The record gives the reactivity of an RNA of 177 nucleotides to 2A3 and DMS. The data come from the RNA Mapping Database (RMDB), library M2PK50. Conditions: 150 mM KOAc, 10 mM MgCl2 and 150 mM bicine (pH 8.5), 24 C. Values cover nucleotides 27 to 126. For 2A3, 1,367 sequencing reads were counted.
RNA sequence: GGGAACGACUCGAGUAGAGUCGAAAAGUGCGCACGUUCGCGUGCGCACAAAGAAAGCUGGAUCGCCCAGCACGGAACGAACCGAACAGCGUUAAAAUAAAAAAAUCCGAGCGUUCGCGCUCGGAAAGUCAUAGAGAAUGUUCGCAUUCUCUAUGACAAAAGAAACAACAACAACAAC
Reactivity to 2A3 in 0.01 (KOAc 150mM, MgCl2 10mM, bicine 150mM(pH8.5), 24C), signal-to-noise 2, nucleotides 027 to 126: g010u020g040c000g030c010a000c000g050u050u050c160g030c000g120u000g030c020g060c020a000c000a000a000a000g010a030a020a010g010c000u010g020g020a110u210c100g060c040c010c030a000g000c030a020c000g000g010a140a060c020g000a090a050c020c010g030a140a040c020a040g050c030g040u030u030a120a110a140a110u250a050a140a020a080a000a000a030u000c000c000g000a040g020c000g020u100u110c280g000c030g000c090u010c000g000g000a000a000a000
Reactivity to DMS in 0.01 (KOAc 150mM, MgCl2 10mM, bicine 150mM(pH8.5), 24C), signal-to-noise 1, nucleotides 027 to 126: g000u000g000c010g010c000a000c030g040u000u000c180g060c040g140u000g000c020g010c010a000c000a000a040a090g000a100a150a180g000c020u000g000g010a260u010c230g030c100c000c010a090g010c070a130c060g000g000a020a050c040g020a030a130c050c010g010a100a090c060a060g010c040g000u000u000a070a050a130a090u060a040a000a030a070a050a120a150u000c000c000g000a050g000c000g020u000u020c270g020c010g030c000u000c000g000g000a000a000a000